[RMDB]
RNA sequence: GGGAACGACUCGAGUAGAGUCGAAAAGAUAUGGAGCGUAUCAGCGAAGAACUGGUUACAUGGGAAUACAUAUCGGAAACGAUAUGGAUAAAUCCAUGUAACCAGGGAGCUGUUACGCUCCUAAGUCCGCGUAAAAUAACUUCGGUUAUUUUACGCGAAAAGAAACAACAACAACAAC
Reactivity to DMS in 0.01 (KOAc 150mM, MgCl2 10mM, bicine 150mM(pH8.5), 24C), signal-to-noise 2, nucleotides 027 to 126: g000a120u000a300u000g000g000a040g020c000g020u000a000u000c000a000g000c030g010a200a200g020a180a290c020u000g010g010u000u000a000c020a010u010g000g010g000a170a140u000a080c010a020u010a030u000c000g020g010a140a070a270c000g000a000u000a020u000g000g010a100u000a040a100a150u010c000c000a000u020g000u000a000a000c000c000a000g000g010g000a100g030c000u000g000u000u020a010c010g020c010u000c000c030u000a020a080g000u010c050
Reactivity to 2A3 in 0.01 (KOAc 150mM, MgCl2 10mM, bicine 150mM(pH8.5), 24C), signal-to-noise 1, nucleotides 027 to 126: g090a000u120a070u210g010g010a000g040c000g010u010a000u030c000a020g030c040g210a300a020g040a120a080c030u000g010g000u020u010a000c000a000u000g020g000g050a120a050u120a110c020a010u040a010u000c010g010g060a090a040a030c030g000a000u020a000u030g010g030a010u120a140a170a040u070c000c000a000u010g000u010a000a010c000c000a000g010g000g000a000g000c020u030g020u000u000a000c000g040c000u000c000c000u010a000a000g000u000c010
The record gives the reactivity of an RNA of 177 nucleotides to DMS and 2A3. For 2A3 the reverse transcriptase was SuperScript II with manganese. Conditions: 150 mM KOAc, 10 mM MgCl2 and 150 mM bicine (pH 8.5), 24 C. The DMS profile rests on 1,619 reads.